Chemical mapping of a 207-nucleotide RNA with DMS and 2A3.
RNA sequence: GGGAACGACUCGAGUAGAGUCGAAAACAACACGAGUCCUGUCGCUAUGCCCAUCGUUAUCGCUAACCGCAUAGUUACCUCUUUUCAUUUUGUAACCAUCUGUCACAUGAUUACUGAUGUCCAUUGUAACCUGCCUGUUUAAGCAGAUUCACCCAGAAAUGAAGGUGGAGUUCGCUCCACCUUCAUUAAAAGAAACAACAACAACAAC
Reactivity to DMS in 0.01 (KOAc 150mM, MgCl2 10mM, bicine 150mM(pH8.5), 24C), signal-to-noise 2, nucleotides 027 to 156: c060a100a120c020a090c040g000a200g030u000c040c020u010g090u010c060g030c010u020a030u000g030c010c010c040a110u010c060g020u000u000a090u000c080g000c050u000a100a140c030c080g030c070a100u000a050g010u000u000a030c040c040u000c070u000u000u000u000c020a110u000u000u010u010g020u000a020a020c010c010a050u000c000u000g010u010c110a110c070a030u000g000a040u010u010a080c040u010g000a020u000g010u000c050c050a140u030u010g030u000a030a010c020c000u010g020c000c010u000g070u000u000u010a000a070g000c000a020g000a060u000u000c070a140c030c110c010a280g030a080
Reactivity to 2A3 in 0.01 (KOAc 150mM, MgCl2 10mM, bicine 150mM(pH8.5), 24C), signal-to-noise 4, nucleotides 027 to 156: c060a050a000c040a040c090g050a050g040u090c040c070u040g020u030c070g010c020u020a010u080g010c010c030c030a160u110c060g070u090u060a080u130c090g000c150u060a030a070c030c040g000c020a010u020a040g010u010u030a040c050c010u070c060u090u120u120u110c090a070u060u140u110u140g040u030a020a030c000c000a040u000c060u060g070u080c030a050c010a110u100g040a130u110u070a020c010u010g020a040u050g050u020c070c030a090u050u140g030u040a030a020c020c000u000g010c000c010u040g080u040u080u080a020a010g000c020a000g000a020u070u030c010a080c020c000c020a010g040a000

DMS adducts were read by reverse transcription with MarathonRT. It was measured as part of the RMDB library OK3TST.